[RMDB]
Chemical mapping of a 177-nucleotide RNA with 2A3 and DMS. 2A3 is a SHAPE reagent: it acylates the 2'-hydroxyl of flexible nucleotides of all four kinds. The RNA was probed in 150 mM KOAc, 10 mM MgCl2 and 150 mM bicine (pH 8.5) at 24 C. For DMS the reverse transcriptase was MarathonRT. Reactivities are given for positions 27 through 126. Values are in units of 0.01, from 0 to 300, in steps of 10.
RNA sequence: GGGAACGACUCGAGUAGAGUCGAAAAUGGACAAGCUUCUGUUGUUCAACAGAGCAAUUUUACAGCAUACCAGUUGAAUGUGGAAAAGAGAUCAACAACUGGUAUGUGGGUCAGAGCUCUUACCCCAAUCGUACUACCAGUUCGCUGGUAGUACGAUAAAAGAAACAACAACAACAAC
Reactivity to 2A3 in 0.01 (KOAc 150mM, MgCl2 10mM, bicine 150mM(pH8.5), 24C), signal-to-noise 3, nucleotides 027 to 126: u060g010g020a020c010a020a040g080c110u160u100c070u250g150u040u000g020u000u080c030a040a060c020a060g000a000g020c010a000a030u060u100u040u040a060c030a010g020c000a000u000a020c000c000a000g010u000u020g090a240a160u180g000u140g160g150a060a080a080a110g220a040g020a100u120c010a010a080c000a000a000c000u000g000g000u000a020u000g000u000g000g020g000u000c040a010g010a000g000c000u010c000u050u110a140c000c000c000c020a020
Reactivity to DMS in 0.01 (KOAc 150mM, MgCl2 10mM, bicine 150mM(pH8.5), 24C), signal-to-noise 2, nucleotides 027 to 126: u010g020g010a050c030a030a050g000c110u010u010c140u000g010u000u000g000u000u000c040a020a190c210a040g000a020g070c010a080a050u000u000u000u000a040c000a300g000c010a010u000a010c000c000a020g000u000u000g000a050a110u000g020u000g000g000a120a130a120a100g010a190g000a120u010c010a000a300c010a000a000c020u010g010g000u000a000u000g010u000g020g000g010u000c260a030g010a290g000c010u010c000u000u000a150c090c000c010c110a080